[RMDB]
Source: RMDB library ARCHII, as collected in RNAgym. Structure probing data (2A3) for a 207-nucleotide construct. 2A3 adducts were read by reverse transcription with SuperScript II with manganese.
RNA sequence: GGGAACGACUCGAGUAGAGUCGAAAACGUGACUGGGCUUGUCUGCACCAUGUCGGUGUGAGUGCAGGAGCCGAGCAAUAACGACAGCAUCGACUGCGCCCGGAGAAUGUCUGGACGGUCUUUCAAGGACGCGGGUUCAAUUCCCGCCAUCUCCACUCUCAGGAUACUGGUUCGCCAGUAUCCUGAGAAAAGAAACAACAACAACAAC
Reactivity to 2A3 in 0.01 (KOAc 150mM, MgCl2 10mM, bicine 150mM(pH8.5), 24C), signal-to-noise 1, nucleotides 027 to 156: c080g120u140g140a040c090u190g010g000g010c000u050u050g070u140c000u000g010c000a000c000c030a000u010g080u070c100g050g000u110g010u060g050a130g030u030g010c000a030g000g000a000g000c000c020g010a020g000c030a000a130u110a090a000c010g080a050c020a060g040c000a050u080c010g060a120c070u060g070c080g000c000c060c040g030g000a000g000a090a040u010g000u110c060u030g100g040a040c050g060g020u000c050u040u210u160c080a120a030g010g000a000c000g000c020g000g000g000u060u080c000a030a030u000u030c010c010c010g060c000c000a060u000c010u030c010c010a070c010u010